Chemical mapping of a 177-nucleotide RNA with 2A3 and DMS.
DMS adducts were read by reverse transcription with MarathonRT.
The RNA was probed in 150 mM KOAc, 10 mM MgCl2 and 150 mM bicine (pH 8.5) at 24 C.
[RMDB]
RNA sequence: GGGAACGACUCGAGUAGAGUCGAAAAGAGGAAAGAGAAGCCGACAACGGCACGAGAGCAACGACGAUCGUGGCAGCAGUCAGCGUGGCCGAAAAACGUCUCAGUCGAAUGUUCAUGUUCGGGGCCAAGCGUGCUAUAGGUUCGCCUAUAGCACGCUAAAAGAAACAACAACAACAAC
Reactivity to 2A3 in 0.01 (KOAc 150mM, MgCl2 10mM, bicine 150mM(pH8.5), 24C), signal-to-noise 3, nucleotides 027 to 126: g090a010g040g140a070a090a030g100a070g000a080a000g060c030c000g080a090c060a090a060c010g060g050c020a000c020g060a090g000a000g050c050a070a030c070g110a010c000g070a080u090c030g000u050g040g000c010a030g010c010a000g070u080c040a010g010c110g120u070g040g000c000c000g090a110a020a010a000a000c060g020u000c010u000c110a060g070u070c010g030a060a080u060g000u130u090c060a030u130g000u050u020c010g010g000g020g000c000c020a010
Reactivity to DMS in 0.01 (KOAc 150mM, MgCl2 10mM, bicine 150mM(pH8.5), 24C), signal-to-noise 2, nucleotides 027 to 126: g000a130g000g000a040a020a040g020a080g000a070a140g000c020c030g000a030c160a040a110c080g020g000c010a010c090g000a120g020a180g000c080a170a140c150g020a120c030g000a080u000c040g020u010g000g000c040a150g000c090a150g010u020c000a100g000c100g010u020g020g000c030c000g030a010a020a050a050a080c050g000u050c030u000c050a100g050u020c040g000a040a010u000g000u000u000c130a110u000g000u030u000c070g000g000g030g050c020c030a090